[RMDB]
RNA sequence: GGGAACGACUCGAGUAGAGUCGAAAAGAUAUGGAUGUAUCAUGCGCGCCUGAUGACCAAGAUCGGAAACGAUCUUGCAAGGGCCGCAUGAGUACAUCCUAAGUCAAAAGAGCUCUUCGGAGCUCAAUCAAUCUAGAUCGUUCGCGAUCUAGAUUGAAAAAGAAACAACAACAACAAC
Reactivity to 2A3 in 0.01 (KOAc 150mM, MgCl2 10mM, bicine 150mM(pH8.5), 24C), signal-to-noise 2, nucleotides 027 to 126: g040a030u090a040u240g000g010a000u010g000u020a000u030c000a000u010g030c040g020c020g070c000c000u230g110a300u130g030a080c080c000a010a000g010a000u000c050g020g030a030a120a020c020g000a010u000c000u000u000g020c020a100a250g000g000g010c000c020g010c010a000u010g000a000g000u010a000c000a000u000c000c000u000a040a010g050u010c030a000a080a150a250g010a010g020c010u010c000u030u100c300g230g000a000g000c000u010c010a000a010
Reactivity to DMS in 0.01 (KOAc 150mM, MgCl2 10mM, bicine 150mM(pH8.5), 24C), signal-to-noise 3, nucleotides 027 to 126: g000a030u030a300u010g000g010a020u000g010u000a040u000c010a000u020g020c010g040c300g020c010c010u000g020a090u020g000a150c300c000a000a000g000a010u000c000g020g010a130a110a190c000g000a000u000c000u000u000g030c000a060a080g010g000g010c020c010g000c000a000u010g000a010g010u000a000c000a020u000c000c000u010a020a140g000u010c030a110a120a160a150g000a010g020c000u000c000u000u010c260g020g000a010g000c000u010c000a030a070

Description: The record gives the reactivity of an RNA of 177 nucleotides to 2A3 and DMS. The DMS profile rests on 2,397 reads. Reactivities are given for positions 27 through 126. 2A3 is a SHAPE reagent: it acylates the 2'-hydroxyl of flexible nucleotides of all four kinds. The reactions ran in a buffer of 150 mM KOAc, 10 mM MgCl2 and 150 mM bicine (pH 8.5), at 24 C. For 2A3 the reverse transcriptase was SuperScript II with manganese.